[RMDB]
RNA sequence: GGGAACGACUCGAGUAGAGUCGAAAACUCUGGUGAGACCCUAUCUAGUAUAGCAAUCCACCAAGCAGGUGAUUUCACACAAUUCAGGUUCUCAUAGAAAAUGCGCCCUGACUUGACAGGUAUGGUCCCCGGGUAUCCGAUUCGUCGGAUACCCGGGAAAAGAAACAACAACAACAAC
Reactivity to 2A3 in 0.01 (KOAc 150mM, MgCl2 10mM, bicine 150mM(pH8.5), 24C), signal-to-noise 1, nucleotides 027 to 126: c010u010c000u000g130g000u050g030a080g040a000c010c010c010u000a000u000c010u010a020g180u010a000u050a070g050c000a000a070u030c050c040a000c030c000a000a070g090c120a130g040g000u000g020a120u010u210u210c040a040c030a010c000a010a020u070u070c090a010g020g020u160u040c060u010c010a010u040a010g170a110a050a050a050u220g020c030g000c000c000c000u040g000a070c030u000u000g100a000c000a100g020g000u030a040u120g010g000u080c000